[RMDB]
RNA sequence: GGGAACGACUCGAGUAGAGUCGAAAAGAUAUGGACAUUUGGGAACAACAGCGUCUGUGUCGGAAACGACAUGACGACAUGUUUAGAAUGUCCUAAGUCAAAACGCGCAUCGUUCGCGAUGCGCGAACCAGCUAGAACUGUUCGCAGUUCUAGCUGGAAAAGAAACAACAACAACAAC
Reactivity to 2A3 in 0.01 (KOAc 150mM, MgCl2 10mM, bicine 150mM(pH8.5), 24C), signal-to-noise 2, nucleotides 027 to 126: g000a000u000a000u090g000g020a000c010a020u020u030u070g300g280g090a020a050c230a070a000c090a300g020c010g000u000c100u250g060u020g010u000c000g000g000a050a000a000c000g000a000c010a020u040g010a000c010g030a020c040a170u300g020u010u010u030a010g000a000a000u000g000u000c000c000u000a010a000g010u020c040a000a000a170a190c020g000c000g000c000a020u000c000g130u140u120c300g000c020g170a020u000g050c000g000c000g000a000a000
Reactivity to DMS in 0.01 (KOAc 150mM, MgCl2 10mM, bicine 150mM(pH8.5), 24C), signal-to-noise 1, nucleotides 027 to 126: g040a030u000a130u010g030g000a000c000a000u030u020u000g000g040g030a000a000c040a080a100c110a190g010c000g000u000c010u010g070u010g000u000c000g070g000a080a040a050c000g010a000c000a000u000g000a010c020g020a070c040a230u000g030u010u010u000a300g010a000a000u020g000u000c000c000u010a010a050g010u020c010a110a030a110a180c030g000c000g010c000a010u000c000g000u030u030c300g010c000g000a000u010g010c000g010c000g000a010a070
An RNA of 177 nucleotides, treated with 2A3 and DMS and read out base by base. For 2A3 the reverse transcriptase was SuperScript II with manganese. Source: RMDB library TTRDES, as collected in RNAgym. The 2A3 profile rests on 2,588 reads. DMS adducts were read by reverse transcription with MarathonRT. High 2A3 reactivity points to a flexible backbone, as in loops and unpaired stretches. The DMS profile rests on 900 reads.